[RMDB]
RNA sequence: GGGAACGACUCGAGUAGAGUCGAAAAUAUGUUAAGGAUGGUAAAUACUUUACAAGUGAACCACCCGUAACAUAUUCACCAGCUACAAUUUUAGCUGGUAGUGUCUACACUAAUAGCUGCCUUGUAUAAGUAGUUUCAUGUUCGCAUGAAACUACUUAAAAGAAACAACAACAACAAC
Reactivity to DMS in 0.01 (KOAc 150mM, MgCl2 10mM, bicine 150mM(pH8.5), 24C), signal-to-noise 2, nucleotides 027 to 126: u000a000u000g010u000u000a060a030g030g000a020u000g010g020u000a050a090a110u000a030c010u000u010u030a130c250a090a080g000u000g010a260a030c000c000a000c000c000c000g000u000a000a010c030a010u000a020u000u000c120a100c020c000a020g010c080u000a030c280a070a110u010u000u010u000a000g010c040u000g020g010u000a010g020u000g020u000c100u000a150c020a080c040u010a030a070u000a060g010c110u010g000c120c130u020u000g010u000a110u000
Reactivity to 2A3 in 0.01 (KOAc 150mM, MgCl2 10mM, bicine 150mM(pH8.5), 24C), signal-to-noise 2, nucleotides 027 to 126: u000a000u010g000u010u010a050a040g030g010a040u000g000g000u050a160a250a040u090a100c030u080u110u060a160c150a130a020g010u000g010a030a020c000c000a000c000c000c000g000u010a000a010c000a000u000a000u030u040c050a020c010c000a000g000c010u010a030c090a290a260u110u160u110u090a030g010c000u010g070g000u010a010g010u020g000u000c080u090a070c060a030c030u080a070a050u040a080g050c080u050g070c050c020u040u080g060u040a130u010